[RMDB]
RNA sequence: GGGAACGACUCGAGUAGAGUCGAAAACAAGAGGUUAGGAGUGAUCAGUGCUCCCUUGUCAUUUGCAUCAGGUCCCAGGACUCACAUUCUUUGCAUGCUUGUGUGAGCUAGUGUUUUCCAUGUCCUUGGGGUGUGGUCACAGCGACCUUUUUGCCUGCGCUGUACCCAAAUUCGUUUGGGUACAGCGAAAAGAAACAACAACAACAAC
Reactivity to 2A3 in 0.01 (KOAc 150mM, MgCl2 10mM, bicine 150mM(pH8.5), 24C), signal-to-noise 2, nucleotides 027 to 156: c020a010a060g030a030g080g010u040u140a080g120g000a040g040u040g020a030u060c050a060g080u070g260c050u130c020c020c040u020u100g110u240c050a130u050u100u230g060c030a040u010c030a110g170g000u110c000c000c040a000g050g030a040c000u070c020a040c000a060u140u110c070u060u140u140g060c060a110u100g050c030u240u070g030u030g030u030g090a030g040c000u050a080g020u050g070u120u100u060u030c040c000a030u030g010u000c000c050u090u100g000g000g030g010u060g030u030g020g000u000c000a020c010a130g180c100g000a030c000c000u020u000u010u060u080g140c020c050u050g030